An RNA of 207 nucleotides, treated with 2A3 and DMS and read out base by base. DMS adducts were read by reverse transcription with MarathonRT. 2A3 adducts were read by reverse transcription with SuperScript II with manganese. Conditions: 150 mM KOAc, 10 mM MgCl2 and 150 mM bicine (pH 8.5), 24 C.

RNA sequence: GGGAACGACUCGAGUAGAGUCGAAAAUCAUGAAGAAGUAGGCUUAGGCCAAUUGCUUGGUGGUGAAAGUAGAGGGAAGGUAGCACUUCGACGCCUCUAAGUACGCUGUGGGAGUAGUGCUUAAAUCAAAAGCACAGCGACUUCGGUCGCUGUGCAACUAUCGGUUAAUGUUCGCAUUAACCGAUAGAAAAGAAACAACAACAACAAC
Reactivity to 2A3 in 0.01 (KOAc 150mM, MgCl2 10mM, bicine 150mM(pH8.5), 24C), signal-to-noise 4, nucleotides 027 to 156: u090c010a020u090g030a020a050g040a050a010g080u120a030g050g000c010u060u060a040g030g070c030c020a040a070u110u070g040c040u040u040g020g010u020g000g010u050g050a130a030a000g060u060a010g030a030g000g000g020a030a030g020g000u060a030g030c030a020c040u030u040c040g080a050c070g070c010c010u010c020u030a050a050g030u030a020c040g010c070u040g010u040g020g020g000a050g010u080a010g000u020g000c020u030u100a060a080a040u100c070a070a040a050a000g010c000a000c000a000g000c000g000a000c010u030u070c210g080g000u010c000g000c000u010g000u000g000c000a000a000
Reactivity to DMS in 0.01 (KOAc 150mM, MgCl2 10mM, bicine 150mM(pH8.5), 24C), signal-to-noise 2, nucleotides 027 to 156: u000c060a080u020g000a090a050g030a070a080g000u000a120g010g040c030u020u000a080g040g060c000c010a070a100u010u020g000c030u000u000g020g030u000g000g050u000g020a080a100a100g000u000a050g010a070g010g030g010a100a090g030g020u000a070g030c090a100c080u000u000c040g030a060c090g000c060c030u000c030u000a030a130g010u000a020c050g010c020u000g020u010g000g020g040a170g000u000a050g020u010g000c030u000u000a040a110a130u010c060a050a080a150a210g010c020a020c010a000g000c050g030a020c020u000u010c300g050g030u000c000g030c000u000g050u000g000c000a010a010